Notes:
Structure probing data (2A3 and DMS) for a 177-nucleotide construct. The data come from the RNA Mapping Database (RMDB), library M2PK90.

[RMDB]
RNA sequence: GGGAACGACUCGAGUAGAGUCGAAAAGCUCGGAGCGUAAUCGCGUCUUGACGUGAGUAGGGAUAGACUAGACUGUAGGCUAUCCCAGUGUGCAUAGCGCACAAUACGCUGAUGUACAGUCAACAAAAUGCCGAAGUAACUUCGGUUACUUCGGCAUAAAAGAAACAACAACAACAAC
Reactivity to 2A3 in 0.01 (KOAc 150mM, MgCl2 10mM, bicine 150mM(pH8.5), 24C), signal-to-noise 2, nucleotides 027 to 126: g120c020u010c090g070g060a050g020c040g000u030a020a010u010c000g010c020g040u030c100u190u280g090a020c000g020u000g000a020g010u070a100g000g020g000a010u000a000g000a010c000u010a020g010a040c020u020g020u030a010g030g000c000u010a010u000c000c000c000a000g000u010g000u020g000c020a060u180a300g110c020g000c040a000c000a020a020u020a010c000g000c000u030g000a010u050g010u000a010c000a010g010u000c000a010a020c030a000a090a040
Reactivity to DMS in 0.01 (KOAc 150mM, MgCl2 10mM, bicine 150mM(pH8.5), 24C), signal-to-noise 2, nucleotides 027 to 126: g030c000u000c010g040g000a060g000c000g010u000a060a230u000c010g010c020g020u000c100u010u000g020a020c020g030u000g010a010g010u000a140g010g010g020a000u010a000g010a090c020u010a100g020a030c030u000g020u010a020g000g000c000u000a010u000c000c000c010a030g000u000g020u000g000c010a220u000a150g020c220g000c000a030c000a020a050u000a030c000g010c000u000g000a140u010g020u010a020c000a020g030u010c020a120a050c300a080a040a100